RNA sequence: GGGAACGACUCGAGUAGAGUCGAAAAUGGCUUGCGAAGCUCUGCAUUUUGGAAAUUGUAUAUCACACAACGAUUUGGUGCGACAUAACUGGAUUUGGAGGGCUUCCACGUAUUGAGCACUAUCGUACGCCAUGAUGGAUUUCGAUCCAUCAUGGCGAAAAGAAACAACAACAACAAC
Reactivity to 2A3 in 0.01 (KOAc 150mM, MgCl2 10mM, bicine 150mM(pH8.5), 24C), signal-to-noise 1, nucleotides 027 to 126: u070g010g050c010u070u080g030c050g080a090a020g040c020u000c030u100g020c020a030u000u070u000u160g040g060a060a130a070u030u040g090u080a160u040a020u140c070a020c030a010c000a150a060c040g110a020u090u030u220g040g000u030g000c010g000a010c010a060u050a110a030c010u030g030g000a040u040u070u100g050g040a020g040g000g030c030u020u000c000c000a020c080g000u050a070u040u160g000a030g000c020a020c120u060a020u030c010g060u070a050
Reactivity to DMS in 0.01 (KOAc 150mM, MgCl2 10mM, bicine 150mM(pH8.5), 24C), signal-to-noise 1, nucleotides 027 to 126: u000g000g000c060u020u000g040c120g030a020a030g000c020u000c000u000g000c020a050u000u000u000u000g030g000a080a140a210u010u010g040u010a090u000a070u040c030a030c060a020c110a120a110c140g000a080u000u000u020g040g040u010g030c110g010a150c120a010u000a010a140c050u020g000g000a010u000u000u000g020g000a020g000g010g010c150u000u000c000c040a040c120g050u000a140u010u000g000a210g000c050a050c080u010a090u000c070g010u010a090